[RMDB]
RNA sequence: GGGAACGACUCGAGUAGAGUCGAAAAGAUAUGGAUCCUUGGGAGCCGAUAAGCUGUCCAACCAUGUGAUAUCGGAAACGAUAUCACAUGGUUGGCAGCUUUUGACGGCUCACUUGGAUCCUAAGUCCGUAAGUACUUACUUCGGUAAGUACUUACGAAAAGAAACAACAACAACAAC
Reactivity to DMS in 0.01 (KOAc 150mM, MgCl2 10mM, bicine 150mM(pH8.5), 24C), signal-to-noise 2, nucleotides 027 to 126: g000a130u010a300u000g010g000a010u000c000c000u000u000g000g000g020a030g010c000c000g040a170u010a020a030g000c000u010g000u030c000c000a000a000c030c000a020u000g020u000g010a010u010a000u000c000g010g000a150a110a280c000g010a020u000a000u000c000a000c000a000u000g000g000u000u000g000g010c000a000g000c000u000u000u010u000g010a190c160g020g000c000u000c000a000c000u010u000g000g010a010u000c000c000u000a010a080g000u000c050